[RMDB]
RNA sequence: GGGAACGACUCGAGUAGAGUCGAAAAGGAUAAAAAGCCCUAAUCUUAAAUUCGCGAUUUGCGUCAAACACACACCCUGUCAUUGUUUGUUAUACGUGGUUUGUAAUGUGGAACGGAGGGUAAUCGAGCUCGGGAAUAAGUUCGCUUAUUCCCGAGCAAAAGAAACAACAACAACAAC
Reactivity to DMS in 0.01 (KOAc 150mM, MgCl2 10mM, bicine 150mM(pH8.5), 24C), signal-to-noise 1, nucleotides 027 to 126: g000g000a200u030a010a130a070a050a170g040c000c000c000u000a200a180u020c030u010u030a040a040a200u010u000c020g050c040g030a100u000u010u010g000c050g060u000c060a000a050a110c020a070c060a040c080a070c040c000c020u030g000u020c120a140u030u000g000u000u000u010g000u000u000a040u020a000c010g010u000g010g060u020u000u000g000u010a000a070u010g050u000g000g000a050a080c060g000g000a100g030g000g010u010a010a040u010c060g000a200